[RMDB]
RNA sequence: GGGAACGACUCGAGUAGAGUCGAAAAACGAAACCCAAGGUGCAUGCCGAGGUGCGGUAGGCCUCGUUAACAAACCGCAAAAAAAUAGUCGCAAACGACGAAAACUACCCACUCGCAGCUUAAUAACAGUAGGGUCCCUACUUCGGUAGGGACCCAAGUAUUAUAACCGUUUCGACGGUUAUAAUACAAAAGAAACAACAACAACAAC
Reactivity to DMS in 0.01 (KOAc 150mM, MgCl2 10mM, bicine 150mM(pH8.5), 24C), signal-to-noise 2, nucleotides 027 to 156: a270c070g000a130a090a180c030c000c020a140a270g030g000u010g040c020a130u000g000c080c020g000a060g030g010u010g020c020g000g010u000a080g010g040c030c060u020c030g030u010u000a060a130c040a010a060a190c040c040g000c100a000a010a040a080a080a100a300u000a100g060u010c030g030c040a090a150a170c080g010a030c030g010a030a070a130a080c030u010a070c000c000c010a030c010u000c050g040c040a070g000c080u000u020a010a110u000a030a100c060a110g010u000a120g020g040g080u000c000c000c000u000a040c010u010u010c250g010g040u010a020g010g040g000a000c000c010c000a000a040